[RMDB]
RNA sequence: GGGAACGACUCGAGUAGAGUCGAAAAACAUUGGCCUUCGGGCCAAUGUACUGGAAAUAAAGCCGAAAGGCUACGCAUUCCUUAUUUGGCGAAAGCCUGCGAGAUUAUGUAAGUUCGCUUACAUAAAUGUAAAGUAGUCUUUCGAGACUACUUUACAAAAAGAAACAACAACAACAAC
Reactivity to 2A3 in 0.01 (KOAc 150mM, MgCl2 10mM, bicine 150mM(pH8.5), 24C), signal-to-noise 4, nucleotides 027 to 126: a000c000a000u000u000g000g000c010c000u020u020c260g010g010g000c000c000a000a000u000g000u000a010c030u040g020g100a030a080a090u190a070a190a020g010c000c000g060a080a030a020g000g010c010u010a010c050g010c020a070u030u060c000c000u090u120a180u140u140u110g010g000c000g070a080a020a010g010c000c020u020g010c070g080a240g030a130u060u020a000u020g000u000a000a020g010u020u100c220g010c060u000u010a010c010a010u000a000a080a050
Reactivity to DMS in 0.01 (KOAc 150mM, MgCl2 10mM, bicine 150mM(pH8.5), 24C), signal-to-noise 6, nucleotides 027 to 126: a050c010a010u000u010g010g010c000c010u000u010c230g030g020g020c000c000a000a000u000g000u000a040c140u000g010g000a040a050a090u010a080a130a060g010c000c000g010a120a070a140g010g010c010u000a030c130g010c090a140u000u000c010c010u000u010a100u010u010u010g010g000c000g010a140a090a160g010c000c000u010g010c150g010a140g010a170u000u000a000u000g000u000a000a010g010u000u010c230g010c000u000u000a000c000a010u000a000a020a110

Chemical mapping of a 177-nucleotide RNA with 2A3 and DMS. Reactivities are given for positions 27 through 126. The 2A3 profile rests on 4,870 reads. The RNA was probed in 150 mM KOAc, 10 mM MgCl2 and 150 mM bicine (pH 8.5) at 24 C. As a SHAPE reagent, 2A3 marks flexible, mostly unpaired nucleotides at the ribose 2'-OH. 2A3 adducts were read by reverse transcription with SuperScript II with manganese. It was measured as part of the RMDB library M2PK50.